The record gives the reactivity of an RNA of 177 nucleotides to 2A3. The RNA was probed in 150 mM KOAc, 10 mM MgCl2 and 150 mM bicine (pH 8.5) at 24 C. The 2A3 profile rests on 412 reads. Values cover nucleotides 27 to 126. It was measured as part of the RMDB library OK1LIB. 2A3 adducts were read by reverse transcription with SuperScript II with manganese.
RNA sequence: GGGAACGACUCGAGUAGAGUCGAAAAAGACAGUAAGCAUGAGAUGCCUGAUGAUGGGUUUGAGAUAGCAGCCUGCUUUCUAACAACUGACCUCACAAAAUACUGCUUAAAUUGGAGGUACCAAGUCCAUCCGCCCAACGUUCGCGUUGGGCGGAUGAAAAGAAACAACAACAACAAC
Reactivity to 2A3 in 0.01 (KOAc 150mM, MgCl2 10mM, bicine 150mM(pH8.5), 24C), signal-to-noise 1, nucleotides 027 to 126: a000g030a040c000a000g060u140a040a000g030c040a020u180g010a120g040a080u100g140c000c000u000g120a160u040g000a050u120g040g070g000u000u120u090g080a080g000a020u020a040g000c060a000g060c000c030u030g040c000u000u010u060c000u000a000a040c040a110a020c040u100g100a000c000c000u030c000a160c090a250a070a060a010u210a050c000u010g120c000u100u100a020a150a100u090u030g040g000a060g010g000u000a050c000c030a050a010g010u000c000